[RMDB]
RNA sequence: GGGAACGACUCGAGUAGAGUCGAAAAGAAAAAUCCUUCUCAGGGCAAAUAGAUCCACCUUGGAGAAAAGACAUUUAACUGCAGACAUUUGGGGAUCUUCCACAAACAUCUAAGUAACUAACUAACGUUUACAACCAUGAAACCGUGAAGUGGACAAUCAUACUCAUGAGUUCGCUCAUGAGUAUGAAAAAGAAACAACAACAACAAC
Reactivity to 2A3 in 0.01 (KOAc 150mM, MgCl2 10mM, bicine 150mM(pH8.5), 24C), signal-to-noise 3, nucleotides 027 to 156: g050a000a080a000a030a060u030c010c000u030u010c030u020c040a010g010g000g000c080a010a140a100u160a070g060a050u030c030c030a030c040c010u030u090g120g020a040g060a030a140a040a020g080a030c020a070u180u240u160a090a040c050u070g010c030a040g080a130c010a150u090u170u150g060g000g000g000a020u000c000u010u000c020c000a020c020a020a190a000c000a080u050c030u120a120a080g050u030a070a050c040u020a020a030c030u030a080a060c090g010u010u030u110a060c050a090a030c030c040a040u120g080a100a070a030c060c050g040u020g060a100a020g030u010g030g000a010c030a020a050
Reactivity to DMS in 0.01 (KOAc 150mM, MgCl2 10mM, bicine 150mM(pH8.5), 24C), signal-to-noise 1, nucleotides 027 to 156: g030a060a090a110a170a110u000c030c020u010u010c010u000c030a090g010g000g040c040a070a080a270u000a140g040a180u000c020c090a070c030c000u000u040g020g060a130g040a070a150a070a090g010a120c020a070u020u000u000a100a030c100u000g030c060a080g000a070c090a090u000u000u020g030g000g010g060a050u030c120u000u000c010c040a070c080a020a090a100c040a010u000c060u010a050a110g020u000a090a120c050u010a100a130c060u000a050a080c090g010u000u000u010a090c040a100a150c010c030a040u010g000a090a150a150c050c020g020u000g000a060a110g020u000g000g000a090c030a080a150
This 207-nucleotide RNA was probed chemically with 2A3 and DMS.
DMS adducts were read by reverse transcription with MarathonRT.
The reactions ran in a buffer of 150 mM KOAc, 10 mM MgCl2 and 150 mM bicine (pH 8.5), at 24 C.
The 2A3 profile rests on 1,314 reads.
High DMS reactivity at an A or C suggests that its Watson-Crick edge is free.